[RMDB]
RNA sequence: GGGAACGACUCGAGUAGAGUCGAAAAGCGUGUAAGAUUCGUCUUACACGCAAAAAAGAUAUGGACGUGGAAGGGAGCGUCCACAUCGGAAACGAUGUGACGCGAGGAUCUUCCCACGUCCUAAGUCAAAAAAUUCUGACGGUUCGCCGUCAGAAAAUAUGAUGGUUAGUUUCGACUAACCAUCAUAAAAAGAAACAACAACAACAAC
Reactivity to DMS in 0.01 (KOAc 150mM, MgCl2 10mM, bicine 150mM(pH8.5), 24C), signal-to-noise 1, nucleotides 027 to 156: g040c000g040u010g020u000a000a040g000a090u000u000c300g010u000c000u000u000a000c000a000c000g070c000a000a000a020a050a030a090g030a120u000a100u010g000g000a040c010g000u010g000g000a040a060g010g010g010a260g010c000g000u010c060c010a000c000a000u000c010g010g000a130a020a110c010g010a070u000g020u000g010a110c000g020c020g010a060g030g000a100u000c020u040u000c020c010c020a010c030g020u000c020c000u020a000a070g000u000c000a020a010a070a110a100a190u000u010c000u000g000a020c000g010g030u000u000c300g000c040c000g020u010c010a010g000a010a010a070a120
Reactivity to 2A3 in 0.01 (KOAc 150mM, MgCl2 10mM, bicine 150mM(pH8.5), 24C), signal-to-noise 1, nucleotides 027 to 156: g000c010g000u030g000u020a000a020g000a050u010u200c210g060u000c080u010u000a000c000a000c000g000c010a010a000a000a000a000a000g020a030u040a020u050g000g000a000c000g010u030g030g030a000a000g020g010g040a160g000c020g010u010c150c000a000c000a000u000c000g030g020a030a030a040c000g010a000u010g000u000g000a000c000g050c010g050a230g070g020a030u000c000u010u000c060c010c000a020c040g000u000c000c000u000a000a000g000u000c030a000a030a020a070a040a080u090u000c000u000g000a000c010g000g060u030u070c280g000c110c000g000u000c000a000g010a000a000a000a000